RNA sequence: GGGAACGACUCGAGUAGAGUCGAAAAGAUAUGGAAGAGUGUUCUACCCACCUCGGUAUCGGAAACGAUACACGAGAGGAACAUAGUCUUCCUAAGUCAAAGCCUCGCCUCUUCGGAGGCGAGGCAAGAAUAUUUCUACGUUCGCGUAGAAAUAUUCAAAAGAAACAACAACAACAAC
Reactivity to 2A3 in 0.01 (KOAc 150mM, MgCl2 10mM, bicine 150mM(pH8.5), 24C), signal-to-noise 3, nucleotides 027 to 126: g000a010u060a020u110g000g010a010a000g000a000g010u020g000u030u040c050u120a260c100c070c010a060c010c000u000c000g000g010u000a000u000c010g010g010a020a030a030c020g000a000u010a010c210a290c130g020a010g070a130g160g000a000a010c000a000u150a270g220u010c000u000u000c010c010u000a060a010g020u020c030a090a080a090g000c000c010u030c020g020c020c000u050c070u120u150c300g220g010a010g010g020c000g000a000g010g000c000a000a000
Reactivity to DMS in 0.01 (KOAc 150mM, MgCl2 10mM, bicine 150mM(pH8.5), 24C), signal-to-noise 4, nucleotides 027 to 126: g000a040u000a170u010g000g010a020a000g020a070g040u000g010u000u000c010u000a180c300c120c220a300c110c000u000c000g000g000u000a010u000c000g020g000a030a050a130c000g010a020u000a000c000a070c020g000a010g000a090g020g000a010a010c000a010u000a140g000u000c010u000u000c000c000u000a020a080g000u000c010a150a140a190g000c010c000u000c000g020c000c000u000c000u000u020c230g030g010a020g000g030c000g000a000g000g030c000a000a020